[RMDB]
RNA sequence: GGGAACGACUCGAGUAGAGUCGAAAAGAUAUGGACGCACCCUUUUGACGCUCAAGAUGAGUGUCGGAAACGACAUUGAGAGCGAUAAGGUUGCGUCCUAAGUCAAACCAGGUCUUCGGACCUGGAAGCAGCAAAACAAGUUCGCUUGUUUUGCUGCAAAAGAAACAACAACAACAAC
Reactivity to 2A3 in 0.01 (KOAc 150mM, MgCl2 10mM, bicine 150mM(pH8.5), 24C), signal-to-noise 2, nucleotides 027 to 126: g020a010u090a020u100g000g000a010c010g000c000a010c000c000c000u000u070u010u170g190a110c050g010c010u010c020a050a070g080a290u300g180a090g170u060g000u040c000g000g010a060a050a000c010g000a010c000a050u040u100g070a090g000a000g180c040g050a070u040a080a000g000g010u010u020g000c010g000u010c010c000u000a010a000g010u000c010a000a000a060c000c000a010g000g010u000c000u030u130c250g110g010a000c000c000u000g000g000a000a010
Reactivity to DMS in 0.01 (KOAc 150mM, MgCl2 10mM, bicine 150mM(pH8.5), 24C), signal-to-noise 2, nucleotides 027 to 126: g010a070u010a300u020g010g020a000c000g000c000a000c050c000c000u000u000u000u010g030a150c050g000c000u000c000a090a150g020a250u020g010a090g040u000g000u010c010g030g020a120a090a140c000g000a030c000a000u000u000g000a300g000a000g020c000g000a130u030a000a040g000g000u000u000g010c000g000u000c000c010u000a000a040g000u010c040a160a200a150c000c000a000g010g000u010c000u000u010c180g030g000a010c000c000u000g000g010a040a000